[RMDB]
RNA sequence: GGGAACGACUCGAGUAGAGUCGAAAAUGGCCCACUGUCCCGAUACGAUUAUUCGGGGUCAGCUGUUUGUAAGUCCCGUAUUCAACUUGUGCCGCACAGGGCAGGUUGAGGGCCAGACACUGCGCUACCAUUCUUCCCGGUUCGCCGGGAAGAAUGGAAAAGAAACAACAACAACAAC
Reactivity to 2A3 in 0.01 (KOAc 150mM, MgCl2 10mM, bicine 150mM(pH8.5), 24C), signal-to-noise 3, nucleotides 027 to 126: u050g040g010c040c000c000a020c010u020g000u000c000c050c020g000a010u030a060c090g100a200u130u110a070u300u010c000g000g000g010g000u000c000a020g030c030u010g070u070u070u060g120u090a080a060g070u060c020c000c000g000u060a140u060u080c020a000a010c040u060u000g010u160g260c000c010g080c020a170c060a150g040g020g000c010a000g000g010u000u000g020a030g000g020g040c000c000a000g020a000c020a020c050u110g040c040g030c080u110a080
Reactivity to DMS in 0.01 (KOAc 150mM, MgCl2 10mM, bicine 150mM(pH8.5), 24C), signal-to-noise 1, nucleotides 027 to 126: u000g000g000c030c000c010a280c010u030g000u020c010c000c000g030a000u000a150c200g030a300u040u150a130u000u000c000g010g000g000g000u000c000a000g000c070u000g010u020u010u050g000u000a120a000g000u020c040c000c020g010u030a180u170u000c000a010a060c000u000u000g120u000g000c000c030g000c150a020c300a030g000g040g000c000a000g000g000u000u010g000a120g100g000g000c010c250a000g000a070c000a060c090u000g000c030g000c010u140a120
This 177-nucleotide RNA was probed chemically with 2A3 and DMS.
Values are in units of 0.01, from 0 to 300, in steps of 10.
The RNA was probed in 150 mM KOAc, 10 mM MgCl2 and 150 mM bicine (pH 8.5) at 24 C.
2A3 adducts were read by reverse transcription with SuperScript II with manganese.